[RMDB]
RNA sequence: GGGAACGACUCGAGUAGAGUCGAAAACGUCAAGGAUUCGUCCUUGACGAAAGUCGCGGCUUGAGGGCGUAUACGGGUGCGCACACACACGACCCUCAAGCCAAACAGGUGGAUUCGUCCACCUGAAUCAUACCAAGUUCUUCGGAACUUGGUAUGAAAAAGAAACAACAACAACAAC
Reactivity to DMS in 0.01 (KOAc 150mM, MgCl2 10mM, bicine 150mM(pH8.5), 24C), signal-to-noise 4, nucleotides 027 to 126: c000g000u000c010a000a000g000g010a020u000u010c200g000u000c000c010u000u000g000a000c010g000a020a040a100g020u010c170g010c230g000g010c000u010u000g010a000g000g000g000c100g010u010a090u000a140c140g020g000g020u000g020c070g020c190a070c170a070c060a040c050a010c020g000a180c000c010c000u000c010a000a010g000c000c020a010a040a110c010a000g010g030u000g000g000a040u000u000c200g010u010c000c010a000c000c000u010g000a070a100
Reactivity to 2A3 in 0.01 (KOAc 150mM, MgCl2 10mM, bicine 150mM(pH8.5), 24C), signal-to-noise 5, nucleotides 027 to 126: c000g020u000c000a000a000g020g000a030u040u090c170g060u020c060c000u000u010g000a000c010g010a000a010a010g070u040c040g020c120g130g000c010u000u000g000a010g000g020g020c030g050u060a050u040a160c110g080g030g030u050g050c170g040c070a030c010a000c000a000c000a010c150g270a300c010c000c010u000c010a000a000g000c000c000a000a000a000c000a000g000g000u010g010g000a030u040u050c160g040u000c050c000a000c000c010u000g000a000a010
Description:
The data come from the RNA Mapping Database (RMDB), library M2PK50. Structure probing data (DMS and 2A3) for a 177-nucleotide construct. The DMS profile rests on 4,705 reads. Conditions: 150 mM KOAc, 10 mM MgCl2 and 150 mM bicine (pH 8.5), 24 C. For DMS the reverse transcriptase was MarathonRT.